[RMDB]
RNA sequence: GGGAACGACUCGAGUAGAGUCGAAAAUUAAAGGAGGAGGAGAAAUAUAGCGAGAGAUCGGUCCUCCCACGCGCGUCUCGCGCUGAUAAGAGGAAUAAGAGGAUGAUUAAUAGAUAGCGGGCAAAAACGUAAGAAGCAGUUUCGACUGCUUCUUACGAAAAGAAACAACAACAACAAC
Reactivity to DMS in 0.01 (KOAc 150mM, MgCl2 10mM, bicine 150mM(pH8.5), 24C), signal-to-noise 2, nucleotides 027 to 126: u010u000a050a000a150g000g010a040g010g020a050g020g010a090g000a030a070a090u030a060u020a110g000c020g010a090g010a060g020a040u000c020g030g000u000c020c010u010c000c010c050a090c210g010c060g010c060g010u010c130u010c030g000c020g010c000u020g000a070u020a070a060g000a040g000g000a040a040u000a070a060g010a020g000g000a050u020g000a100u000u000a050a090u010a040g020a060u000a030g010c030g000g010g000c100a030a020a080a060a120
Reactivity to 2A3 in 0.01 (KOAc 150mM, MgCl2 10mM, bicine 150mM(pH8.5), 24C), signal-to-noise 1, nucleotides 027 to 126: u100u080a080a000a000g050g010a000g040g030a050g000g000a030g090a120a180a000u100a030u080a100g040c020g010a040g000a000g000a060u020c050g030g000u050c000c000u000c030c010c000a040c040g080c000g010c010g130u050c030u080c110g060c030g000c010u040g030a040u030a130a050g040a010g100g030a060a090u110a160a000g020a000g050g000a010u030g030a000u060u220a060a070u080a080g070a020u040a040g000c000g000g020g030c000a080a000a000a000a000

This 177-nucleotide RNA was probed chemically with DMS and 2A3. High 2A3 reactivity points to a flexible backbone, as in loops and unpaired stretches. The reactions ran in a buffer of 150 mM KOAc, 10 mM MgCl2 and 150 mM bicine (pH 8.5), at 24 C. The DMS profile rests on 1,119 reads. The 2A3 profile rests on 918 reads. Values are in units of 0.01, from 0 to 300, in steps of 10. Reactivities are given for positions 27 through 126.